[RMDB]
Chemical mapping of a 207-nucleotide RNA with 2A3. The reactions ran in a buffer of 150 mM KOAc, 10 mM MgCl2 and 150 mM bicine (pH 8.5), at 24 C.
RNA sequence: GGGAACGACUCGAGUAGAGUCGAAAAAAGGAGUAAUUUCAACUUUCAAGUCUUGUUAUUGGCUGAAUACACCAAGUGUGAGUCUUGGUUGUGGGAACUGACUUUGUUACGAUGUUGUCUCACUGCAGGAGCCAUAUAUUGAAGACAAUGUCUGGAAGUACUCCAUACCCUUCGGGGUAUGGAGUACAAAAGAAACAACAACAACAAC
Reactivity to 2A3 in 0.01 (KOAc 150mM, MgCl2 10mM, bicine 150mM(pH8.5), 24C), signal-to-noise 1, nucleotides 027 to 156: a030a020g210g080a080g090u180a190a150u180u160u020c140a150a050c000u090u160u020c080a110a010g010u000c040u060u030g000u130u070a070u010u030g000g010c000u080g080a130a000u100a080c030a000c000c060a020a020g030u030g050u050g130a090g120u080c030u010u000g030g000u030u020g000u000g000g010g010a050a010c000u040g000a020c020u270u130u120g160u180u080a050c030g000a050u070g000u050u000g020u000c010u000c000a000c080u130g000c090a030g200g070a030g000c020c020a000u000a000u010a000u070u250g100a000a000g010a030c030a010a080u070g050u050c020u000g000g020a190a000